[RMDB]
RNA sequence: GGGAACGACUCGAGUAGAGUCGAAAAUACACAGAGUACUAGGUAGGCCAGGCUUGGUGGCUCACGCCUGUAAUCCCAGCACUUUAGGAGGCCAAGGGGGGUGGAUCACCUGAGGUCGGGAGUUCAAUGAAACUGAUAGGUUCGCCUAUCAGUUUCAAAAAGAAACAACAACAACAAC
Reactivity to DMS in 0.01 (KOAc 150mM, MgCl2 10mM, bicine 150mM(pH8.5), 24C), signal-to-noise 3, nucleotides 027 to 126: u000a080c060a080c080a080g000a050g020u010a020c060u010a050g000g000u000a090g000g000c050c010a000g020g000c050u000u030g030g030u000g020g000c000u000c060a080c080g000c030c010u010g000u020a120a140u020c000c000c010a100g000c080a060c060u020u000u040a070g030g000a150g010g010c010c050a040a190g020g000g000g000g030g000u030g000g020a070u000c060a040c020c020u000g000a130g000g020u020c020g010g000g000a080g030u010u000c080a140a130
Reactivity to 2A3 in 0.01 (KOAc 150mM, MgCl2 10mM, bicine 150mM(pH8.5), 24C), signal-to-noise 1, nucleotides 027 to 126: u190a000c030a000c020a030g070a040g090u040a070c040u070a040g060g050u080a030g000g050c010c000a000g020g070c020u060u160g130g010u060g000g070c000u020c070a020c020g000c010c000u000g030u060a020a010u000c000c000c010a010g010c010a000c020u020u090u060a070g040g010a080g000g000c010c040a060a070g070g000g000g000g000g020u070g070g040a070u060c010a050c070c000u020g030a040g010g020u050c000g000g000g010a010g030u110u010c030a070a090